[RMDB]
RNA sequence: GGGAACGACUCGAGUAGAGUCGAAAAGGGUAUUCAAGAUCUGACUUUGGACUACAUAGAUAUCUUUGGCGCGGAGAGGAGCUAUAGAUAUACUAAUAAUGAGGUUGACCUGGACCGUCCUUACGCGCUACAGUCCAAUAUUCGUAUUGGACUGUAGAAAAGAAACAACAACAACAAC
Reactivity to DMS in 0.01 (KOAc 150mM, MgCl2 10mM, bicine 150mM(pH8.5), 24C), signal-to-noise 7, nucleotides 027 to 126: g010g010g010u000a050u000u000c060a060a070g000a100u000c040u010g020a080c080u010u010u010g010g010a100c100u000a070c100a100u000a040g000a080u000a020u000c020u000u000u000g010g010c010g010c060g010g000a110g010a080g010g000a150g010c040u000a060u000a030g000a030u010a040u000a060c030u000a020a100u010a070a090u000g000a080g010g010u000u000g000a090c070c020u000g000g000a060c100c050g010u000c000c020u000u000a100c130g010c120g010
Reactivity to 2A3 in 0.01 (KOAc 150mM, MgCl2 10mM, bicine 150mM(pH8.5), 24C), signal-to-noise 5, nucleotides 027 to 126: g060g000g010u060a070u070u110c040a060a030g060a200u010c030u100g060a070c040u120u070u100g040g020a030c030u050a020c100a090u090a050g040a030u030a030u040c000u040u050u060g020g000c010g010c050g050g050a090g010a040g140g040a050g000c010u030a010u020a080g010a010u050a010u040a180c020u030a020a130u100a110a080u150g050a050g080g000u040u050g040a050c010c010u020g010g020a000c020c000g040u010c010c010u050u040a040c080g010c010g010